Conditions: 150 mM KOAc, 10 mM MgCl2 and 150 mM bicine (pH 8.5), 24 C. An RNA of 177 nucleotides, treated with 2A3 and read out base by base.
RNA sequence: GGGAACGACUCGAGUAGAGUCGAAAAAAGCAUAGCUCACCGAUAACACAAAUAAUGUACGAUAAAAUAACCCAGUUAACUGAGAAGUUUGAUGAACCUGAUGCAUAACCUACAAUACCAAUUAGUAGGGAGCUACUGAAUUCGUUCAGUAGCUCCCAAAAGAAACAACAACAACAAC
Reactivity to 2A3 in 0.01 (KOAc 150mM, MgCl2 10mM, bicine 150mM(pH8.5), 24C), signal-to-noise 2, nucleotides 027 to 126: a000a000g150c110a270u000a000g000c020u040c000a000c000c020g200a210u110a120a120c120a000c020a020a190a100u210a030a060u230g210u300a050c000g120a110u180a110a000a000a200u060a000a020c000c000c000a050g080u150u000a000a000c000u020g090a000g020a300a000g000u080u110u180g110a140u050g000a000a000c000c000u000g000a000u020g220c020a020u050a060a030c000c000u050a060c090a000a140u180a300c080c030a000a290u050u080a050g080u080a090
For 2A3, 414 sequencing reads were counted. The data come from the RNA Mapping Database (RMDB), library OK1LIB.